[RMDB]
RNA sequence: GGGAACGACUCGAGUAGAGUCGAAAAUGUAAACAGCUUCGUGGAGAUCCUUUUCACCUAAAUGCAACACUCCGCAUGCGUGGCAUGUCAACGUUUGGAUCCUCACCAAUAACGAUAAUGACAAGUGUCCUUCUGUGAUUUUCGAAUCACAGAAGGAAAAAGAAACAACAACAACAAC
Reactivity to 2A3 in 0.01 (KOAc 150mM, MgCl2 10mM, bicine 150mM(pH8.5), 24C), signal-to-noise 2, nucleotides 027 to 126: u110g000u040a090a000a070c000a020g010c010u070u090c070g010u010g020g020a040g000a040u130c040c020u020u030u030u140c070a130c020c020u090a140a110a140u080g060c050a160a030c020a030c080u000c030c020g010c040a040u100g060c050g100u030g070g000c010a040u000g020u050c040a050a030c090g000u000u010u010g030g000a080u020c020c050u080c010a040c040c030a040a060u100a060a030c030g030a040u090a170a100u190g060a030c010a000a040g100u060g080
Reactivity to DMS in 0.01 (KOAc 150mM, MgCl2 10mM, bicine 150mM(pH8.5), 24C), signal-to-noise 3, nucleotides 027 to 126: u010g030u020a060a110a120c110a120g020c030u010u010c090g030u010g000g010a060g010a060u010c030c030u010u010u010u020c060a080c080c060u000a070a050a070u000g020c060a100a100c100a080c040u000c070c060g000c130a030u000g020c050g010u000g000g000c050a110u010g000u000c060a060a080c070g010u000u000u000g010g000a090u000c020c040u000c060a130c030c040a030a070u000a060a080c080g000a070u010a030a090u010g010a030c090a060a110g000u000g000